[RMDB]
The record gives the reactivity of an RNA of 177 nucleotides to 2A3 and DMS. The 2A3 profile rests on 6,096 reads. The data come from the RNA Mapping Database (RMDB), library TTRDEL. For DMS the reverse transcriptase was MarathonRT. Conditions: 150 mM KOAc, 10 mM MgCl2 and 150 mM bicine (pH 8.5), 24 C.
RNA sequence: GGGAACGACUCGAGUAGAGUCGAAAAGAUAUGGAUGAUGGACAUGCUCUAUAUGUCGGAAACGACAUUAAGAGCAACAGCCCGCUCAUCCUAAGUCAAAACUGUCAGGACUUCGGUCCUGACAGAAUCCACCAAUCUAGUUCGCUAGAUUGGUGGAAAAAGAAACAACAACAACAAC
Reactivity to 2A3 in 0.01 (KOAc 150mM, MgCl2 10mM, bicine 150mM(pH8.5), 24C), signal-to-noise 2, nucleotides 027 to 126: g030a010u050a050u130g000g020a000u000g010a020u220g010g010a020c060a120u110g010c000u000c010u010a070u010a010u200g000u010c000g020g010a060a070a030c010g010a000c010a000u040u000a110a020g000a000g010c010a010a000c010a000g010c000c010c010g000c030u000c000a010u000c000c000u010a160a010g040u030c050a000a000a120a170c000u000g000u000c000a000g000g010a010c000u050u160c300g100g000u000c000c010u000g000a000c000a000g010a000a010
Reactivity to DMS in 0.01 (KOAc 150mM, MgCl2 10mM, bicine 150mM(pH8.5), 24C), signal-to-noise 3, nucleotides 027 to 126: g010a040u020a300u000g000g010a000u000g000a000u010g000g000a020c040a190u000g010c000u010c000u000a200u010a010u010g020u000c000g010g000a110a120a240c000g010a010c000a010u000u000a170a040g000a010g000c000a030a030c250a170g030c000c000c010g030c210u010c010a010u000c000c000u000a020a180g000u010c040a060a070a130a160c020u000g010u000c000a020g010g000a030c000u000u010c160g030g010u000c000c000u000g000a010c000a010g010a040a100